RNA sequence: GGGAACGACUCGAGUAGAGUCGAAAACUGUUGGUUCGCCGGAGAUCCUUCUCGAGUAUUCGCUUUUUCUUCCUUUCUUCUACCCACUGUUCGAGGAUCUCCUCUCUCUCCUUCGAGGACGGGUUCGCGACGGGUUGGCUCAUCCUGAGACCGGGGACUAGUGAUACAAGUUCGCUUGUAUCACUAGAAAAGAAACAACAACAACAAC
Reactivity to DMS in 0.01 (KOAc 150mM, MgCl2 10mM, bicine 150mM(pH8.5), 24C), signal-to-noise 2, nucleotides 027 to 156: c050u000g000u000u000g020g010u000u000c040g020c100c260g010g020a130g000a040u000c000c010u000u010c030u000c030g000a070g060u000a070u000u010c040g000c050u000u000u010u000u000c040u010u010c030c020u000u000u000c040u000u000c070u000a140c000c010c040a200c140u010g030u010u000c050g010a050g040g010a040u000c010u000c010c010u010c040u000c040u020c030u010c030c060u020u010c100g010a060g020g030a060c010g020g030g020u000u010c050g030c020g030a120c020g020g020g030u010u000g010g000c040u000c040a080u000c040c020u000g030a220g010a120c050c020g000g010g030g030a300
Reactivity to 2A3 in 0.01 (KOAc 150mM, MgCl2 10mM, bicine 150mM(pH8.5), 24C), signal-to-noise 3, nucleotides 027 to 156: c040u040g010u040u050g020g020u050u030c060g060c100c050g030g000a010g000a020u020c000c000u100u110c100u050c050g060a050g020u070a110u110u140c050g070c100u130u130u060u070u090c040u060u120c020c000u070u130u090c020u100u020c030u080a090c020c020c030a060c090u120g090u220u110c070g000a020g000g010a010u000c010u020c020c000u000c000u000c000u000c010u000c020c000u090u090c080g050a030g000g000a020c010g000g040g000u090u250c060g010c020g080a130c070g120g040g000u060u080g020g000c010u000c010a070u030c020c010u040g020a040g060a130c040c080g010g000g000g000a000
Chemical mapping of a 207-nucleotide RNA with DMS and 2A3. For 2A3, 2,885 sequencing reads were counted. It was measured as part of the RMDB library VIROID. 2A3 adducts were read by reverse transcription with SuperScript II with manganese. The reactions ran in a buffer of 150 mM KOAc, 10 mM MgCl2 and 150 mM bicine (pH 8.5), at 24 C.